[RMDB]
RNA sequence: GGGAACGACUCGAGUAGAGUCGAAAACAUGGAUGUUCGCAUCCAUGAAAAGAUUUAGUCGUAGGACGCGACUAAGUAAAAUAAAAGAAAAGUCCACUGAGAAAAGGACAUGAGUUCGCUCAUGUCCCAUGUAGCUUUACUUCGGUAAAGCUACAUGAAAAGAAACAACAACAACAAC
Reactivity to DMS in 0.01 (KOAc 150mM, MgCl2 10mM, bicine 150mM(pH8.5), 24C), signal-to-noise 3, nucleotides 027 to 126: c010a030u000g000g000a010u000g010u010u010c190g040c000a010u000c000c000a000u000g010a080a050a100a100g010a110u000u000u000a000g000u000c000g000u000a150g030g000a010c000g000c000g000a000c000u000a000a000g030u000a040a030a040a080u000a050a010a050a030g010a040a070a100a220g000u010c000c000a300c300u000g010a150g010a060a080a080a080g000g000a010c000a000u000g000a010g010u000u000c200g010c000u010c000a020u010g000u000c000c010
Reactivity to 2A3 in 0.01 (KOAc 150mM, MgCl2 10mM, bicine 150mM(pH8.5), 24C), signal-to-noise 4, nucleotides 027 to 126: c010a000u010g000g000a010u010g010u070u090c180g020c070a000u000c000c000a000u010g000a020a020a010a010g050a010u010u030u030a000g000u000c010g000u010a080g010g010a000c010g000c000g010a000c000u000a000a010g040u050a000a050a020a070u100a010a030a030a020g210a030a090a020a010g020u000c030c010a030c090u190g090a130g070a150a140a060a050g000g000a000c000a000u000g000a000g020u060u130c230g000c070u000c000a000u010g000u010c000c000